This 207-nucleotide RNA was probed chemically with 2A3 and DMS. Source: RMDB library OK3TST, as collected in RNAgym.
RNA sequence: GGGAACGACUCGAGUAGAGUCGAAAACAAAACACGGGCGGCGCUCAAUACGGCAACGCUUUAAAACGCGGCGGAUGUCCGCCCCGAUAUAAACGCCAAUAAUGAAAUAGCCGAUAAAUAUUAUUGUCACCAUUAUUCGGCCUCGCUUACAUACCAGGUGAAUGAAAGAUUUCGAUCUUUCAUUCACAAAAGAAACAACAACAACAAC
Reactivity to 2A3 in 0.01 (KOAc 150mM, MgCl2 10mM, bicine 150mM(pH8.5), 24C), signal-to-noise 3, nucleotides 027 to 156: c020a000a070a020a010c120a020c030g010g000g000c020g000g010c010g010c000u060c110a090a130u190a120c040g020g000c030a000a040c030g000c000u060u070u090a080a070a010a020c070g040c070g010g020c000g030g040a160u180g010u000c000c000g000c000c000c000c000g040a010u030a000u020a140a100a000c050g010c010c000a010a020u040a010a020u060g060a070a030a150u070a050g050c070c030g030a030u100a030a110a050u220a080u200u050a040u040u130g040u060c030a010c040c000a010u000u030a000u020u050c020g010g000c000c000u030c020g060c000u090u130a040c030a070u160a080c040c100a020g170
Reactivity to DMS in 0.01 (KOAc 150mM, MgCl2 10mM, bicine 150mM(pH8.5), 24C), signal-to-noise 2, nucleotides 027 to 156: c050a080a020a110a070c080a180c080g000g010g050c090g000g000c050g070c070u020c040a080a100u000a120c070g050g000c010a080a070c030g000c000u000u000u000a100a180a130a160c110g060c090g040g000c020g050g020a130u000g020u010c000c000g010c020c020c000c010g000a150u010a110u000a030a050a040c040g000c040c020a070a040u000a050a060u010g000a070a070a140u010a120g010c090c020g020a050u000a030a150a130u000a100u000u000a050u010u020g000u010c030a180c170c010a050u000u000a110u000u000c080g030g000c020c030u000c030g000c050u000u010a110c020a070u010a070c020c020a140g030